[RMDB]
RNA sequence: GGGAACGACUCGAGUAGAGUCGAAAAGAGUAUUCCAACAGCAGUAGCCUUAUGCAACAAGAGCAUAUAUUUUUUACUUGUAUCACUGUAAUAUGAUGUUGCUGGAAUGCUACUGUUUCUGAGAUGCAGACCGUUAGGAAUUCGUUCCUAACGGUCUAAAAGAAACAACAACAACAAC
Reactivity to 2A3 in 0.01 (KOAc 150mM, MgCl2 10mM, bicine 150mM(pH8.5), 24C), signal-to-noise 6, nucleotides 027 to 126: g040a000g030u040a040u030u020c020c020a030a000c010a050g010c000a020g020u050a020g010c010c020u130u100a050u110g010c010a020a010c020a040a110g060a040g160c060a010u050a000u010a100u140u100u110u030u060u080a090c090u120u130g030u090a080u090c050a030c070u060g040u130a070a080u050a100u150g120a050u020g000u000u000g000c000u020g000g130a050a030u030g000c010u010a050c010u010g000u000u020u000c020u010g080a120g000a030u090g050c010
Reactivity to DMS in 0.01 (KOAc 150mM, MgCl2 10mM, bicine 150mM(pH8.5), 24C), signal-to-noise 4, nucleotides 027 to 126: g000a110g030u000a040u010u000c020c010a070a110c090a040g000c000a010g000u000a020g000c070c090u000u010a080u010g010c000a060a070c070a070a100g010a170g000c040a030u000a050u020a010u000u010u020u010u010u030a080c070u000u010g030u010a080u000c120a070c190u020g000u000a060a020u020a040u020g010a080u010g000u000u000g020c030u000g010g020a080a060u000g000c000u010a020c030u010g020u000u010u000c030u010g010a130g000a080u020g010c180
Structure probing data (2A3 and DMS) for a 177-nucleotide construct. Conditions: 150 mM KOAc, 10 mM MgCl2 and 150 mM bicine (pH 8.5), 24 C.